[RMDB]
RNA sequence: GGGAACGACUCGAGUAGAGUCGAAAAGGUCGAGUUCGCUCGACCAAAAAACCGUAGGUCGAUGUAUACGGGAGGUACGCUAUUUCGAAAGAGAUGGCGUACCGACGAUCGUAUACCGCUCGACCUAAACGGAAAAAUACCAACUUCGGUUGGUAAAGUAACAAUUAUGAUUCGUCAUAAUUGUUACAAAAGAAACAACAACAACAAC
Reactivity to DMS in 0.01 (KOAc 150mM, MgCl2 10mM, bicine 150mM(pH8.5), 24C), signal-to-noise 2, nucleotides 027 to 156: g000g040u000c010g010a050g030u000u000c300g020c010u000c000g030a010c010c000a000a000a020a070a020a020c030c000g000u010a040g010g030u000c010g030a020u000g010u000a010u000a020c030g000g020g000a070g030g010u010a000c010g000c010u010a010u000u000u000c000g000a190a120a250g010a040g000a000u010g020g000c010g030u000a010c000c000g010a010c200g000a070u000c000g030u010a000u000a000c000c040g010c090u010c000g010a030c000c000u000a000a020a040c040g040g000a020a040a050a130a150u000a070c000c010a010a020c000u000u000c300g060g010u000u010g010g010u010a000a020a120
Reactivity to 2A3 in 0.01 (KOAc 150mM, MgCl2 10mM, bicine 150mM(pH8.5), 24C), signal-to-noise 4, nucleotides 027 to 156: g020g010u010c010g010a010g010u070u120c160g100c130u000c000g000a000c000c020a000a000a000a000a000a000c000c010g010u010a000g010g010u000c000g000a010u290g010u000a000u000a000c000g000g000g000a000g000g000u000a010c000g000c000u010a010u000u000u010c040g050a140a070a060g000a020g000a000u000g010g010c000g000u000a000c000c000g000a000c000g000a000u000c000g000u000a000u000a000c000c000g000c000u000c000g010a000c000c000u010a020a040a000c000g020g050a090a020a000a020a050u090a020c000c000a000a000c000u030u030c120g130g010u000u000g020g000u060a080a060a010
Structure probing data (DMS and 2A3) for a 207-nucleotide construct. For DMS, 5,082 sequencing reads were counted. The reactions ran in a buffer of 150 mM KOAc, 10 mM MgCl2 and 150 mM bicine (pH 8.5), at 24 C.